An RNA of 177 nucleotides, treated with DMS and 2A3 and read out base by base. Values are in units of 0.01, from 0 to 300, in steps of 10. 2A3 adducts were read by reverse transcription with SuperScript II with manganese. The reactions ran in a buffer of 150 mM KOAc, 10 mM MgCl2 and 150 mM bicine (pH 8.5), at 24 C. For DMS, 2,571 sequencing reads were counted.

RNA sequence: GGGAACGACUCGAGUAGAGUCGAAAAACGGUCGGUGUACGCACCGACCGAGGAGGACGUGGGGAACAAGGGCUGUACACGUCGCAGUCCUCCCCGCGGACUCCAGUGCUAGGUACGCCUAGCACAAAAUCCCGGGGAAAUUCGUUUCCCCGGGAUUAAAAGAAACAACAACAACAAC
Reactivity to DMS in 0.01 (KOAc 150mM, MgCl2 10mM, bicine 150mM(pH8.5), 24C), signal-to-noise 1, nucleotides 027 to 126: a190c030g000g000u000c020g010g040u000g000u030a110c280g040c060a000c000c000g000a000c020c010g000a020g040g000a000g000g000a080c010g020u000g000g000g000g020a070a040c190a060a090g000g000g000c000u040g010u000a080c120a080c070g030u030c100g000c000a000g000u000c000c010u000c000c000c010c000g030c020g000g000a080c000u000c000c000a000g010u000g020c000u020a000g000g000u000a140c170g010c020c000u000a020g000c020a010c000a060a080
Reactivity to 2A3 in 0.01 (KOAc 150mM, MgCl2 10mM, bicine 150mM(pH8.5), 24C), signal-to-noise 4, nucleotides 027 to 126: a000c000g010g000u000c020g010g060u020g040u050a060c280g020c080a000c000c000g000a000c000c000g000a040g000g000a000g000g010a010c000g000u020g000g000g000g010a000a100c080a170a070g020g020g040c000u010g030u090a060c120a030c170g170u110c100g010c000a000g000u010c000c000u010c000c000c000c010g000c010g000g000a000c000u020c000c000a000g000u000g000c000u010a000g000g000u020a020c170g050c020c000u010a000g000c000a000c000a000a060